[RMDB]
Structure probing data (2A3 and DMS) for a 177-nucleotide construct. For 2A3, 20,930 sequencing reads were counted. DMS adducts were read by reverse transcription with MarathonRT. Conditions: 150 mM KOAc, 10 mM MgCl2 and 150 mM bicine (pH 8.5), 24 C.
RNA sequence: GGGAACGACUCGAGUAGAGUCGAAAAAUGUCGAAGCAAUGGCACAGUCCUAGGCAUCGUUCCUCCAUCCGAUGUCGAAGCAAUGGCGCAGUCUUAGGCAUCGGCGGUGUCGAAGCAAUGGCGUAGACCAGACUUAUAUGUUCGCAUAUAAGUCUGGAAAAGAAACAACAACAACAAC
Reactivity to 2A3 in 0.01 (KOAc 150mM, MgCl2 10mM, bicine 150mM(pH8.5), 24C), signal-to-noise 6, nucleotides 027 to 126: a000u070g020u030c020g040a070a020g050c060a060a150u190g020g000c050a050c050a160g070u060c010c000u030a050g020g000c010a020u010c010g020u040u050c010c010u040c010c010a040u020c000c010g010a020u010g010u010c010g010a010a000g010c050a040a140u170g120g000c070g010c070a010g020u040c010u010u030a020g000g000c000a000u000c000g010g000c010g010g010u030g010u020c020g030a040a020g020c050a040a120u140g070g000c030g030u040a020g030a030
Reactivity to DMS in 0.01 (KOAc 150mM, MgCl2 10mM, bicine 150mM(pH8.5), 24C), signal-to-noise 7, nucleotides 027 to 126: a090u010g020u000c020g000a110a140g020c130a090a060u000g010g010c050a070c100a110g010u000c010c020u010a150g010g000c010a040u000c020g000u000u000c020c010u000c050c040a100u000c040c000g000a010u000g020u000c010g000a040a050g010c110a100a070u000g010g000c040g030c060a110g010u010c020u000u000a080g010g000c020a010u000c010g010g010c190g010g010u000g010u000c020g000a070a110g000c110a080a070u000g000g010c040g020u010a110g010a250